[RMDB]
RNA sequence: GGGAACGACUCGAGUAGAGUCGAAAAGAUAUGGAUUAGUGGAGAACUGGGUCGGAAACGACCUGGUUCGUUGAAACUACUGUCCUAAGUCAAAACUGUAAGCGAAGCUUCGGCUUCGCUUACAGAACUAUACACGAUACUUCGGUAUCGUGUAUAGAAAAGAAACAACAACAACAAC
Reactivity to 2A3 in 0.01 (KOAc 150mM, MgCl2 10mM, bicine 150mM(pH8.5), 24C), signal-to-noise 2, nucleotides 027 to 126: g010a010u070a040u120g000g010a040u080u230a070g020u030g050g080a110g000a080a000c010u010g000g000g000u020c000g000g020a110a030a020c000g000a010c010c070u020g010g020u030u020c020g000u070u050g000a010a000a000c010u050a010c070u130g030u000c010c010u020a100a020g050u030c050a020a010a190a220c010u000g000u010a000a000g000c000g000a000a000g030c000u070u110c180g020g020c030u000u000c010g000c000u000u000a000c000a000g000a000a000
Reactivity to DMS in 0.01 (KOAc 150mM, MgCl2 10mM, bicine 150mM(pH8.5), 24C), signal-to-noise 4, nucleotides 027 to 126: g000a030u000a300u000g000g010a030u000u000a010g020u000g000g010a120g000a010a020c000u000g000g010g000u000c010g000g010a090a060a170c000g010a020c000c000u000g000g010u000u000c000g020u000u000g010a130a120a080c010u000a010c300u010g010u000c000c000u000a050a120g010u000c020a070a060a060a200c000u000g010u000a000a000g010c010g010a010a000g010c000u000u010c220g030g020c020u000u000c000g010c000u000u000a000c000a000g010a020a150